[RMDB]
RNA sequence: GGGAACGACUCGAGUAGAGUCGAAAAUUGCGUCAUGAGUAAGGCCGAGAUUGGCAUCAGAGAUCGUUACGAAUUCAUGUGUAUUCGUGAGGCGCUAUCUGUGAGUAUCGGAACUGACAGCAGGGCCGUCGAUGUGGACGUUCGCGUUCGUGUUGACAAAAGAAACAACAACAACAAC
Reactivity to 2A3 in 0.01 (KOAc 150mM, MgCl2 10mM, bicine 150mM(pH8.5), 24C), signal-to-noise 2, nucleotides 027 to 126: u050u050g020c010g010u010c000a010u060g030a010g070u070a070a010g070g000c000c010g010a020g010a090u040u080g040g010c000a040u040c010a010g020a000g000a030u070c000g000u020u050a010c000g000a000a010u050u080c070a210u180g300u000g000u040a020u000u020c000g000u000g040a090g040g000c000g000c030u010a030u000c010u010g040u010g030a010g010u020a020u060c000g000g010a030a040c000u010g010a010c010a010g020c010a000g000g000g020c000c010
Reactivity to DMS in 0.01 (KOAc 150mM, MgCl2 10mM, bicine 150mM(pH8.5), 24C), signal-to-noise 3, nucleotides 027 to 126: u020u010g000c060g000u000c020a040u020g010a080g000u030a090a080g020g010c010c000g010a300g010a100u030u030g010g000c050a070u020c020a040g010a070g000a110u010c010g000u000u000a050c020g010a040a020u010u010c060a300u000g000u000g000u000a020u010u010c010g030u020g000a090g000g000c030g010c090u010a070u020c010u010g010u000g000a050g010u010a090u010c060g020g010a060a050c040u000g000a030c090a070g000c090a040g000g000g010c040c030
Chemical mapping of a 177-nucleotide RNA with 2A3 and DMS. The 2A3 profile rests on 5,834 reads. For 2A3 the reverse transcriptase was SuperScript II with manganese.